[RMDB]
RNA sequence: GGGAACGACUCGAGUAGAGUCGAAAAAGCUGCCUAGUACGCUAGGCAGCAACGUGGGACACCCUUCCCCAACGAAGGGCGCUUAUCUGAAAGGGUAGCUACAAGUCCACCGGUACGCCGGUGGACAGACACGAACAGGGUUCGCCCUGUUCGUGUCAAAAGAAACAACAACAACAAC
Reactivity to DMS in 0.01 (KOAc 150mM, MgCl2 10mM, bicine 150mM(pH8.5), 24C), signal-to-noise 2, nucleotides 027 to 126: a070g020c000u000g000c000c000u020a000g040u010a100c230g040c030u000a000g000g000c000a000g010c000a010a000c130g000u060g020g000g030a090c110a060c040c010c010u000u000c020c030c030c060a120a090c150g020a020a010g000g010g010c040g030c100u020u030a020u000c000u000g000a040a150a190g000g000g000u010a030g010c160u000a120c180a080a090g000u020c000c000a030c020c010g030g000u000a080c200g040c000c020g000g040u000g000g000a000c000a010
Reactivity to 2A3 in 0.01 (KOAc 150mM, MgCl2 10mM, bicine 150mM(pH8.5), 24C), signal-to-noise 4, nucleotides 027 to 126: a000g000c000u000g000c000c010u020a010g010u040a030c250g030c110u000a000g010g000c000a000g000c000a000a000c010g050u170g000g000g010a020c020a060c040c000c000u000u040c020c000c000c030a030a070c090g050a020a030g020g040g000c010g010c030u140u100a040u040c020u040g050a050a070a050g050g010g000u020a020g000c030u100a060c030a230a050g000u010c000c010a010c000c000g010g000u030a040c300g050c030c000g000g000u010g010g000a000c000a000

Chemical mapping of a 177-nucleotide RNA with DMS and 2A3. It was measured as part of the RMDB libraries RFM100 and RFMREP. DMS (dimethyl sulfate) methylates the pairing face of unpaired adenines and cytosines. For 2A3, 4,978 sequencing reads were counted.